RNA sequence: GGGAACGACUCGAGUAGAGUCGAAAAGGUAAAGAUCAGGGCACUGCAAGUAAAGAGUUCCAUUAUGAGGAAAAAUCUUUAACCCUAUCUCUUGCGUUUUCAGUGCAGAGUUAUCUCAAGAGAAUGGCGACUAGGGUAUGUUCGCAUACCCUAGUCGAAAAGAAACAACAACAACAAC
Reactivity to DMS in 0.01 (KOAc 150mM, MgCl2 10mM, bicine 150mM(pH8.5), 24C), signal-to-noise 2, nucleotides 027 to 126: g000g000u000a050a080a070g000a040u000c100a070g020g000g030c110a100c110u000g010c090a090a090g000u000a050a030a070g000a050g010u000u000c000c000a100u020u030a110u020g000a150g020g000a000a040a060a080a080u000c000u000u010u010a040a160c050c010c020u010a100u000c020u000c070u010u010g020c110g000u020u000u010u000c030a050g020u010g010c090a110g000a110g010u000u000a070u000c020u000c020a060a080g000a040g010a060a160u020g020g020
Reactivity to 2A3 in 0.01 (KOAc 150mM, MgCl2 10mM, bicine 150mM(pH8.5), 24C), signal-to-noise 1, nucleotides 027 to 126: g070g040u060a060a080a050g050a090u120c090a000g000g000g090c080a070c100u110g000c140a120a090g000u090a050a020a050g000a050g000u010u000c050c040a080u170u170a100u200g070a140g130g050a090a000a070a020a070u010c020u050u020u080a080a110c020c000c000u070a070u080c020u000c040u020u030g000c040g110u000u130u010u080c050a030g040u010g110c010a000g050a020g070u050u120a070u000c030u010c020a090a000g040a030g040a150a200u090g060g010
Chemical mapping of a 177-nucleotide RNA with DMS and 2A3.
The reactions ran in a buffer of 150 mM KOAc, 10 mM MgCl2 and 150 mM bicine (pH 8.5), at 24 C.
Values cover nucleotides 27 to 126.